RNA sequence: GGGAACGACUCGAGUAGAGUCGAAAACUCAAUGACUUCGGUCAUUGAGAAAGGACAAAAGUCCAACUGAGCAGCUUUGAGCUCAUACAUCGUCAUAGCAAAAAACACACACGUUCGCGUGUGUGAACAACAUGGUGUUGUUCGCAACACCAUGUUGAAAAGAAACAACAACAACAAC
Reactivity to 2A3 in 0.01 (KOAc 150mM, MgCl2 10mM, bicine 150mM(pH8.5), 24C), signal-to-noise 4, nucleotides 027 to 126: c000u000c010a010a010u010g010a000c010u040u030c220g070g000u010c010a010u000u010g010a000g020a050a040a000g010g000a020c050a040a300a090a070g010u010c020c000a000a050c060u040g010a000g020c010a000g000c020u020u040u030g010a000g000c000u000c010a080u200a080c080a080u160c180g050u010c010a020u000a010g000c000a010a020a030a030a140a010c000a000c010a010c000a000c010g000u020u050c280g000c010g070u000g000u000g000u010g000a000a020
Reactivity to DMS in 0.01 (KOAc 150mM, MgCl2 10mM, bicine 150mM(pH8.5), 24C), signal-to-noise 2, nucleotides 027 to 126: c000u000c000a000a010u000g010a040c010u000u000c190g050g010u000c000a000u000u000g000a000g000a050a090a080g020g010a020c010a120a090a100a200g010u000c010c000a190a130c120u000g010a020g010c030a270g000c000u000u000u000g010a060g000c030u010c000a070u000a100c210a070u000c190g000u000c010a010u000a000g000c040a000a080a080a060a090a150c010a000c010a000c010a030c000g010u010u000c160g030c000g010u000g020u000g000u000g000a040a110